[RMDB]
RNA sequence: GGGAACGACUCGAGUAGAGUCGAAAAGAUAUGGACCCAUUUACAGCGAUAAGCGUCGGUCGGAAACGACCGUACGCUUUUGACGCUGAAAGUGGGUCCUAAGUCAAAACCUUCCUUCGGGAAGGAACAAAUAACCGUCGUUCGCGACGGUUAUUUGAAAAGAAACAACAACAACAAC
Reactivity to DMS in 0.01 (KOAc 150mM, MgCl2 10mM, bicine 150mM(pH8.5), 24C), signal-to-noise 1, nucleotides 027 to 126: g030a040u000a300u020g020g020a010c000c000c000a000u000u010u000a070c000a010g010c000g000a200u010a000a020g040c000g010u000c020g000g010u010c000g000g010a160a150a240c000g020a000c010c000g020u030a000c020g030c000u010u000u000u000g020a190c070g040c010u000g010a070a000a090g010u000g020g000g000u000c010c000u000a010a120g000u030c060a190a090a150a120c010c000u000u000c000c000u000u000c230g040g010g040a020a000g030g000a060a100

An RNA of 177 nucleotides, treated with DMS and read out base by base. The data come from the RNA Mapping Database (RMDB), library TTRDES. For DMS the reverse transcriptase was MarathonRT. For DMS, 1,069 sequencing reads were counted. The RNA was probed in 150 mM KOAc, 10 mM MgCl2 and 150 mM bicine (pH 8.5) at 24 C.